[RMDB]
RNA sequence: GGGAACGACUCGAGUAGAGUCGAAAAUCUAGCCGCUUAAUGCCGCUAGCCAUCUACCACACGCUUUGCACAUGGGCAGUGGAUUUGAUGGUCAUCUCACAUCGUGCUAGCGAGGGAACCCUGUCUGGGGGUGAACCGCGAAACAGUACCGGACUCACUGGUCUUUAACGUUCGCGUUAAAGACCAGAAAAGAAACAACAACAACAAC
Reactivity to 2A3 in 0.01 (KOAc 150mM, MgCl2 10mM, bicine 150mM(pH8.5), 24C), signal-to-noise 2, nucleotides 027 to 156: u000c010u010a020g010c010c010g010c080u140u300a130a030u300g020c020c000g000c020u050a000g040c000c000a010u030c020u010a030c000c000a020c020a030c260g000c000u030u020u160g000c020a000c000a020u030g000g020g000c010a020g030u010g000g100a120u300u070u170g000a000u010g020g060u030c010a070u030c020u070c010a030c000a040u060c150g010u000g000c010u010a000g000c000g050a300g010g000g000a000a000c000c000c000u030g030u040c020u020g020g000g000g010g000u000g000a000a030c000c000g000c000g010a030a010a020c060a010g020u050a040c020c010g000g020a010c030u010c040a070